[RMDB]
RNA sequence: GGGAACGACUCGAGUAGAGUCGAAAAGGGGUCAGUAUCUUGGAUUUAAUGUAUGGAGAUGUUGUCACUGAAGCCUCCACGGUGACAUCAUCGUUGAAAUACAUUUGUCAGAUACUGACGGAGGCACCCAAAAUCUUUCAUCUUCGGAUGAAAGAAACAAUCCAAUCUAGUUCGCUAGAUUGGAUUGAAAAGAAACAACAACAACAAC
Reactivity to DMS in 0.01 (KOAc 150mM, MgCl2 10mM, bicine 150mM(pH8.5), 24C), signal-to-noise 2, nucleotides 027 to 156: g000g020g000g020u000c000a030g020u000a000u000c010u030u020g080g010a180u000u000u000a050a040u000g030u000a020u000g020g010a120g010a030u000g010u010u000g010u000c000a010c000u020g000a060a100g000c010c000u000c010c000a300c060g000g000u000g020a020c020a010u010c000a010u010c000g000u000u000g000a150a180a030u000a020c000a020u000u000u020g020u000c040a060g000a060u000a030c010u000g010a020c040g030g040a030g050g050c040a050c010c000c000a060a050a110a160u010c000u000u000u000c000a010u000c000u000u000c300g020g020a000u000g000a020a020a000g000a020a100a190
Reactivity to 2A3 in 0.01 (KOAc 150mM, MgCl2 10mM, bicine 150mM(pH8.5), 24C), signal-to-noise 4, nucleotides 027 to 156: g070g010g040g010u020c010a000g000u000a000u010c030u120u270g250g040a170u300u300u100a000a000u010g000u000a010u010g010g010a010g000a010u010g010u030u000g000u000c000a000c000u020g020a070a020g000c000c000u000c000c000a010c010g010g000u000g000a000c000a000u000c000a000u000c010g090u090u010g000a000a000a000u020a000c000a000u010u010u030g070u060c010a000g000a010u000a000c000u000g000a000c000g000g000a000g000g000c000a020c010c000c000a030a110a010a090u010c000u010u000u000c000a000u000c000u040u090c280g150g000a000u000g000a000a000a000g000a000a000a000
Chemical mapping of a 207-nucleotide RNA with DMS and 2A3. Reactivities are given for positions 27 through 156. For 2A3 the reverse transcriptase was SuperScript II with manganese. Source: RMDB library RNAMAK, as collected in RNAgym. The RNA was probed in 150 mM KOAc, 10 mM MgCl2 and 150 mM bicine (pH 8.5) at 24 C.